[RMDB]
RNA sequence: GGGAACGACUCGAGUAGAGUCGAAAAGAAAAUGGUAGCAACGGUUCCAAAGGAGCCGAAGUUGAAAGCUAAGGCAUCGAUCUAAAAUGCUACCAAAAAGGUAACGAGCUUGGCAAUGAACAAAAAAUCUUGAGUUAUUCUUCGGAAUAACUCAAGAAAAAGAAACAACAACAACAAC
Reactivity to DMS in 0.01 (KOAc 150mM, MgCl2 10mM, bicine 150mM(pH8.5), 24C), signal-to-noise 1, nucleotides 027 to 126: g000a090a060a160a100u000g020g000u000a000g020c020a080a300c020g000g010u020u000c000c000a080a110a210g000g000a000g020c000c000g000a020a110g020u000u000g010a070a120a150g000c010u000a060a050g010g000c020a090u000c040g000a070u010c040u040a070a040a100a060u000g000c000u000a010c000c020a040a010a070a120a070g100g010u000a060a150c040g000a060g000c020u000u000g010g010c050a150a100u000g000a060a010c010a020a080a060a050a100a060